An RNA of 177 nucleotides, treated with DMS and 2A3 and read out base by base. The DMS profile rests on 8,604 reads. The 2A3 profile rests on 6,935 reads. 2A3 adducts were read by reverse transcription with SuperScript II with manganese. Source: RMDB library OK2TST, as collected in RNAgym.

RNA sequence: GGGAACGACUCGAGUAGAGUCGAAAAACACAGCGCUUAAAUUAGGAGAGUCUGUGUGGGAAUGCAGGGAGCUUAAUGUUAUUGCUGUUUUUCAAAGAAUAACAGGAAACUGACAUUCAGAAAGAGGACUUACUACAUGGUUCGCCAUGUAGUAAGUAAAAGAAACAACAACAACAAC
Reactivity to DMS in 0.01 (KOAc 150mM, MgCl2 10mM, bicine 150mM(pH8.5), 24C), signal-to-noise 6, nucleotides 027 to 126: a040c020a020c000a010g020c130g000c010u010u000a050a110a220u010u010a120g020g010a120g000a070g000u000c010u000g010u000g000u000g010g010g000a030a030u000g010c050a030g010g010g000a140g010c080u000u010a120a080u000g010u000u000a030u000u010g000c030u000g000u010u020u000u010u010c120a100a100a090g000a030a010u000a020a040c000a020g010g000a070a140a140c040u000g000a080c060a020u000u000c040a150g000a060a070a120g010a140g000g000
Reactivity to 2A3 in 0.01 (KOAc 150mM, MgCl2 10mM, bicine 150mM(pH8.5), 24C), signal-to-noise 6, nucleotides 027 to 126: a000c000a000c000a000g030c050g030c080u120u080a150a220a200u300u200a230g120g100a190g010a010g110u010c010u020g000u000g010u020g030g090g020a050a030u040g010c040a030g000g020g040a070g080c020u080u130a070a040u080g010u020u030a040u030u070g160c010u010g050u080u040u010u010u080c110a170a140a000g030a010a020u000a020a000c010a010g020g050a040a040a020c030u020g040a070c010a010u010u020c010a020g130a060a090a010g120a070g080g030